RNA sequence: GGGAACGACUCGAGUAGAGUCGAAAACGCAUGCGAUGGCCCUGAUCGUACUGCACGGCCACGGCCCGCACAUAGUAUCAUAGUCUGCUGAUAGCGCCUGAUCAGCGCGUACAUGGCCACGAGACACGGCCUGAAAUCAGUUCGCUGAUUUCAGGCCAAAAGAAACAACAACAACAAC
Reactivity to DMS in 0.01 (KOAc 150mM, MgCl2 10mM, bicine 150mM(pH8.5), 24C), signal-to-noise 2, nucleotides 027 to 126: c080g000c110a160u000g000c060g020a080u000g010g010c000c020c030u010g000a110u000c040g010u000a070c300u020g020c190a100c150g010g000c000c000a040c210g020g010c020c010c070g010c060a120c110a040u030a070g010u000a070u000c090a030u000a150g000u010c020u010g000c120u000g030a070u000a060g000c040g000c070c030u020g000a010u000c140a220g010c000g010c070g080u040a050c110a100u020g020g030c010c020a090c090g010a100g010a050c140a150c190
Reactivity to 2A3 in 0.01 (KOAc 150mM, MgCl2 10mM, bicine 150mM(pH8.5), 24C), signal-to-noise 3, nucleotides 027 to 126: c030g040c030a050u090g000c010g150a170u120g040g020c000c020c010u040g000a020u040c000g030u010a080c150u240g170c080a010c060g010g000c000c010a020c000g000g000c000c030c030g020c040a060c010a050u170a070g110u080a050u110c040a040u060a110g080u050c050u100g070c030u040g020a080u060a040g080c040g030c020c000u020g050a040u010c010a010g000c020g010c000g000u000a060c020a090u070g010g000c030c000a060c090g120a100g020a050c070a020c150